[RMDB]
RNA sequence: GGGAACGACUCGAGUAGAGUCGAAAAGACUGCGUGCACUGGAGACGAUAUCGAGCCGGAAAUUAAUCGAUAAUGUCUCAUGUAGUGGAUACGAUCCGGCAAGUAUCGACUACAUGUGCUCGUAGGAGACGGCGGUAGUAUUCGUACUACCGCCGUCAAAAGAAACAACAACAACAAC
Reactivity to 2A3 in 0.01 (KOAc 150mM, MgCl2 10mM, bicine 150mM(pH8.5), 24C), signal-to-noise 2, nucleotides 027 to 126: g010a000c000u000g000c000g000u000g000c000a000c080u080g020g010a000g000a000c020g000a020u000a010u080c000g000a000g000c010c000g000g120a090a260a010u220u210a030a150u160c010g000a000u010a080a100u110g000u000c000u000c010a040u200g070u080a090g010u050g160g000a000u000a040c000g010a040u070c000c000g060g020c040a020a010g010u000a000u000c010g150a000c000u000a000c000a050u170g000u010g000c030u040c000g000u010a020g010g010a060
Source: RMDB library OK1LIB, as collected in RNAgym. The record gives the reactivity of an RNA of 177 nucleotides to 2A3. High 2A3 reactivity points to a flexible backbone, as in loops and unpaired stretches.